Background:
This 177-nucleotide RNA was probed chemically with DMS and 2A3. For 2A3 the reverse transcriptase was SuperScript II with manganese. Reactivities are given for positions 27 through 126. The reactions ran in a buffer of 150 mM KOAc, 10 mM MgCl2 and 150 mM bicine (pH 8.5), at 24 C.

[RMDB]
RNA sequence: GGGAACGACUCGAGUAGAGUCGAAAACGAGGAGCGCCCUGGAGGAGCUCUACGAGCAGAUACCGGGCGCUAAGCCGGGCUUCGACGAGGUGUGGGCCUGGACCGGCGGAAACCCGAGGUACCUGAGCACCCUAUCAACAUUCGUGUUGAUAGGGUGAAAAGAAACAACAACAACAAC
Reactivity to DMS in 0.01 (KOAc 150mM, MgCl2 10mM, bicine 150mM(pH8.5), 24C), signal-to-noise 3, nucleotides 027 to 126: c090g010a220g010g010a090g030c000g010c000c010c010u010g040g000a060g000g020a300g020c000u000c000u000a100c240g010a030g030c000a050g020a300u020a020c010c000g000g000g020c010g030c030u000a020a050g000c030c000g000g000g020c070u000u010c090g000a100c080g000a110g000g010u000g000u000g010g000g040c020c010u000g010g000a050c050c010g000g000c010g000g000a070a060a100c040c010c010g000a120g000g010u010a100c030c000u010g000a160g000
Reactivity to 2A3 in 0.01 (KOAc 150mM, MgCl2 10mM, bicine 150mM(pH8.5), 24C), signal-to-noise 2, nucleotides 027 to 126: c010g010a060g090g040a020g050c010g000c020c050c140u220g130g010a000g030g030a030g000c000u000c030u100a090c200g010a000g000c030a020g000a170u020a050c000c000g000g090g000c000g010c000u000a010a000g010c000c000g020g010g020c030u150u120c080g100a100c070g060a070g060g050u170g060u150g060g160g000c000c010u000g020g010a030c000c000g070g000c000g020g020a090a090a050c000c020c000g010a060g020g030u060a060c020c000u030g030a040g020
The data come from the RNA Mapping Database (RMDB), library OK2TST.